[RMDB]
RNA sequence: GGGAACGACUCGAGUAGAGUCGAAAAGUAAGUGCGGUGACGCACUUACAGACCUAGCUUCGGCUAGGUCAGUAACUCUACGGAGUUACACCAUUACUUCGGUAAUGGACUGAUUACGUUCGCGUAAUCAGACGGUAGCUACGGCUACCGACUAGGUCGGUGACGACCUAGACUUAUCGUACGCGAUAAGAAACAGAGCGCGUACUGUCUGACGACGUAUCCGCGCGGACUAGAAGGCUGGUGCCUCGUCCAACAAAUAGAUACAUAAAUGCAGCUUCGGCUGCAUUAAAAGAAACAACAACAACAAC
Reactivity to 2A3 in 0.01 (KOAc 150mM, MgCl2 10mM, bicine 150mM(pH8.5), 24C), signal-to-noise 9, nucleotides 027 to 266: g000u000a000a000g000u000g000c000g000g070u090g050a040c000g000c000a000c000u000u000a000c000a000g000a000c000c000u000a000g000c000u030u030c290g060g000c000u000a000g000g000u000c000a000g000u000a000a000c000u000c010u010a090c260g100g000a000g000u010u010a030c050a030c020c000a000u010u000a010c020u030u070c270g100g000u000a000a010u010g010g030a050c010u000g000a000u000u000a010c010g030u020u050c300g030c000g130u000a000a000u000c000a010g050a030c030g000g000u000a000g000c010u020a020c160g130g000c000u000a000c000c000g010a010c000u000a000g010g000u000c010g000g070u070g030a040c010g000a000c000c000u000a000g000a010c000u000u010a000u010c010g020u030a030c300g000c010g140a000u010a010a020g040a060a060a020c120a060g100a040g070c000g000c000g020u060a150c080u140g070u030c070u100g160a080c100g000a010c040g010u000a000u000c010c000g000c000g000c020g000g000a030c050u110a070g060a180a080g190g030c130u210g230g220u300g040c000c000u000c010g000u000c000c000a030a010c150a190a020a000u010a010g010a010u020a010c010a010u180a070
Reactivity to DMS in 0.01 (KOAc 150mM, MgCl2 10mM, bicine 150mM(pH8.5), 24C), signal-to-noise 6, nucleotides 027 to 266: g000u000a000a010g010u000g010c000g010g020u030g010a210c000g010c000a000c000u000u000a000c010a120g010a010c000c000u000a000g010c000u000u020c180g010g010c010u000a000g000g000u000c000a030g010u000a030a000c010u000c000u000a140c170g020g000a020g010u000u000a040c030a300c020c000a000u000u000a010c000u000u020c170g030g000u010a010a010u000g000g000a300c020u000g000a010u000u000a000c000g010u000u030c190g020c010g030u000a000a000u000c000a010g000a270c060g000g010u000a000g010c010u000a100c180g030g000c000u000a000c000c000g010a090c000u000a000g000g000u000c010g010g000u020g000a160c000g010a010c000c000u000a000g000a300c000u000u000a010u000c010g010u000a100c220g020c010g010a010u000a010a010g000a220a120a110c230a070g000a100g000c010g000c010g020u000a080c160u010g010u000c020u000g030a120c200g000a090c100g000u000a000u000c000c000g010c010g010c010g030g000a010c010u010a180g020a150a030g000g010c010u010g010g020u010g000c010c010u000c040g000u000c010c020a010a010c100a000a010a020u000a010g000a030u000a000c010a150u000a090
Chemical mapping of a 307-nucleotide RNA with 2A3 and DMS. The RNA was probed in 150 mM KOAc, 10 mM MgCl2 and 150 mM bicine (pH 8.5) at 24 C. DMS adducts were read by reverse transcription with MarathonRT. 2A3 adducts were read by reverse transcription with SuperScript II with manganese.